The record gives the reactivity of an RNA of 177 nucleotides to DMS and 2A3. It was measured as part of the RMDB library OK2TRN. Reactivities are given for positions 27 through 126. The 2A3 profile rests on 5,631 reads.
RNA sequence: GGGAACGACUCGAGUAGAGUCGAAAAUUUGAUACCUACAUACCUCAGAUUAAACAAUUAGUGAAUAAUAGUAUUGAGGGGCUGGCCUAUGAUCGCAUCAGUGUCAUUUUGGUGCCAUCGGUAGAUGCCAAAGGUUAGAAUUCGUUCUAACCUUUGGAAAAGAAACAACAACAACAAC
Reactivity to DMS in 0.01 (KOAc 150mM, MgCl2 10mM, bicine 150mM(pH8.5), 24C), signal-to-noise 8, nucleotides 027 to 126: u000u010u000g020a180u010a110c030c020u000a100c070a100u000a110c020c020u000c020a050g010a150u010u010a070a100a140c040a090a100u000u000a070g010u010g000a120a100u000a030a050u010a090g010u000a090u000u010g000a040g010g000g010g010c110u000g000g000c050c030u000a030u000g010a040u000c270g010c030a030u000c050a040g020u000g000u010c160a120u000u010u000u000g010g010u000g000c000c060a010u000c040g010g020u000a030g010a120u000g010
Reactivity to 2A3 in 0.01 (KOAc 150mM, MgCl2 10mM, bicine 150mM(pH8.5), 24C), signal-to-noise 5, nucleotides 027 to 126: u070u050u130g070a030u100a110c000c010u020a040c020a080u150a070c010c000u000c010a030g030a190u090u170a140a150a040c030a050a110u160u140a120g080u080g160a040a040u090a150a020u040a050g060u060a080u130u080g020a010g020g020g010g000c070u060g030g020c000c000u060a070u090g020a020u090c020g000c020a010u020c010a010g070u040g200u130c080a110u090u140u100u060g010g010u010g000c000c000a010u010c000g020g030u060a070g010a120u160g020